[RMDB]
Chemical mapping of a 177-nucleotide RNA with DMS and 2A3. Conditions: 150 mM KOAc, 10 mM MgCl2 and 150 mM bicine (pH 8.5), 24 C. Reactivities are given for positions 27 through 126. Reactivities are rounded to 0.1 and cut off at 0 and 3.

RNA sequence: GGGAACGACUCGAGUAGAGUCGAAAAUAUUCCGUACUAAGGAUUUCGGUCCGGAACGUCUAGAGACUACACGGCAGACCAAUUUUGUGGUGGUAUGAAUGGAUAGUCCCUAGUUACCAUCUAGGCAAUCUAUCUACGCGUUCGCGCGUAGAUAGAUAAAAGAAACAACAACAACAAC
Reactivity to DMS in 0.01 (KOAc 150mM, MgCl2 10mM, bicine 150mM(pH8.5), 24C), signal-to-noise 3, nucleotides 027 to 126: u020a190u000u000c000c000g010u010a010c070u000a110a100g030g000a090u000u030u010c090g020g030u000c000c000g000g000a020a030c090g020u010c000u020a030g000a100g000a070c010u000a060c300a040c020g000g010c020a040g030a030c050c020a040a110u000u000u030u050g010u030g000g040u010g010g020u000a050u010g020a070a070u010g000g000a180u010a030g000u010c030c000c000u000a040g000u010u000a120c030c040a060u000c050u000a050g010g020c130a090
Reactivity to 2A3 in 0.01 (KOAc 150mM, MgCl2 10mM, bicine 150mM(pH8.5), 24C), signal-to-noise 4, nucleotides 027 to 126: u160a050u010u000c010c010g000u010a010c060u100a050a210g090g000a240u100u070u120c050g000g000u000c050c000g000g000a030a000c010g020u000c000u010a030g010a000g010a140c010u020a030c070a000c020g070g010c050a030g030a080c030c030a060a130u070u090u090u210g200u120g050g030u010g010g010u050a020u080g080a180a070u100g010g030a040u050a050g070u060c000c000c000u000a010g000u030u010a030c010c020a030u050c020u050a030g110g000c050a010